[RMDB]
RNA sequence: GGGAACGACUCGAGUAGAGUCGAAAAUCAGCUCCAACCUCUUCAUGCUCUACACCUUUGGCAAAAUAGUUGAGGAGGAGGAAGGCCCGGGAGCCCUCUGGUUCACCUACAUCGUGUGCUCUGUGGGAACAUCUAUGCCUUUCGAGGCAUAGAUGUUAAAAGAAACAACAACAACAAC
Reactivity to DMS in 0.01 (KOAc 150mM, MgCl2 10mM, bicine 150mM(pH8.5), 24C), signal-to-noise 2, nucleotides 027 to 126: u010c100a040g010c040u010c000c000a170a190c010c000u000c020u000u010c010a090u010g030c010u000c070u010a040c200a080c110c050u000u000u020g010g040c090a050a070a130a090u000a050g000u000u000g000a010g020g010a090g000g010a150g000g010a120a130g020g000c010c010c020g000g000g000a050g000c040c020c030u000c040u010g010g010u000u000c060a070c060c020u010a120c110a080u020c090g020u010g010u000g010c030u000c090u000g040u000g020g010g000
Reactivity to 2A3 in 0.01 (KOAc 150mM, MgCl2 10mM, bicine 150mM(pH8.5), 24C), signal-to-noise 1, nucleotides 027 to 126: u020c000a020g040c020u000c010c020a070a130c020c010u030c010u040u010c000a050u120g020c000u020c060u120a070c040a130c070c070u090u250u170g070g000c040a050a030a110a090u140a080g030u010u060g040a020g010g000a020g010g000a000g010g030a040a060g090g020c070c060c040g020g050g000a030g020c000c050c000u040c000u040g070g000u050u060c000a050c080c000u070a060c020a130u110c060g070u040g030u020g080c020u000c020u040g110u060g080g000g000